[RMDB]
RNA sequence: GGGAACGACUCGAGUAGAGUCGAAAAGACGGUCAUGGUAGAGACCGAGUAAGCGCACAUAGAAAACCGUCAGAACAGAAAGAAGUGUGCAACUGCGCUGAACGAAGUGCAGAGACUGACGAGAAGAAUAUCGAGUGGUGUUCGCACCACUCGAUAUAAAAGAAACAACAACAACAAC
Reactivity to DMS in 0.01 (KOAc 150mM, MgCl2 10mM, bicine 150mM(pH8.5), 24C), signal-to-noise 2, nucleotides 027 to 126: g000a080c030g050g000u000c010a110u000g030g000u040a020g000a180g020a000c000c010g000a210g000u050a030a120g000c120g100c000a000c000a060u040a120g000a060a220a190a140c090c010g000u000c020a020g000a190a190c190a180g000a130a000a290g010a090a070g000u000g010u000g000c010a130a070c000u000g000c000g130c000u000g000a280a140c220g020a020a000g040u010g000c000a040g020a070g010a040c020u020g070a050c000g020a170g020a060a150g000a050
Reactivity to 2A3 in 0.01 (KOAc 150mM, MgCl2 10mM, bicine 150mM(pH8.5), 24C), signal-to-noise 2, nucleotides 027 to 126: g080a030c000g000g000u000c000a150u190g120g030u300a010g080a000g000a130c000c000g000a000g110u020a100a160g000c000g000c060a000c000a000u270a000g080a050a090a000a000c000c000g000u000c000a000g000a090a180c090a010g200a000a220a000g060a070a000g000u030g000u000g000c040a000a000c000u000g000c050g020c030u000g020a150a020c240g050a140a000g000u050g000c010a000g000a060g000a050c020u010g000a020c040g020a000g000a260a000g200a090